Source: RMDB library TTRDEL, as collected in RNAgym. This 177-nucleotide RNA was probed chemically with DMS and 2A3. The 2A3 profile rests on 18,155 reads. In probing experiments dimethyl sulfate is read out at A N1 and C N3, which are open when not base-paired.
RNA sequence: GGGAACGACUCGAGUAGAGUCGAAAAGAUAUGGAGUGGUAGUGUUGACGGAAUAUCGGAAACGAUCAUUCCGAAGGCUAAACCACUCCUAAGUCAAAACCAUGAUCGAGUUCGCUCGAUCAUGGAACCUUAUAUAUAUGUUCGCAUAUAUAUAAGGAAAAGAAACAACAACAACAAC
Reactivity to DMS in 0.01 (KOAc 150mM, MgCl2 10mM, bicine 150mM(pH8.5), 24C), signal-to-noise 5, nucleotides 027 to 126: g000a010u000a300u010g000g000a010g040u000g000g000u000a070g000u010g030u000u000g000a300c010g010g010a010a010u000a030u000c010g010g000a080a060a220c010g000a010u000c220a010u000u000c000c010g020a020a220g000g010c000u000a200a170a030c000c000a000c010u000c000c000u000a000a060g000u010c020a100a060a120a120c000c000a000u000g000a000u000c000g020a010g010u000u010c240g010c000u000c000g000a000u000c010a000u000g000g010a010a070
Reactivity to 2A3 in 0.01 (KOAc 150mM, MgCl2 10mM, bicine 150mM(pH8.5), 24C), signal-to-noise 5, nucleotides 027 to 126: g020a000u060a030u160g000g010a000g010u000g020g010u030a040g060u040g020u130u140g070a020c000g010g000a010a000u010a000u010c000g010g010a040a040a010c010g000a000u060c060a020u100u000c000c000g000a020a000g080g000c010u040a140a060a020c000c000a000c000u010c000c000u000a010a000g020u000c000a000a010a110a160c010c000a000u000g000a000u010c010g010a010g010u110u120c210g120c130u000c010g010a000u000c010a000u000g000g000a000a000

The reactions ran in a buffer of 150 mM KOAc, 10 mM MgCl2 and 150 mM bicine (pH 8.5), at 24 C. The DMS profile rests on 5,856 reads.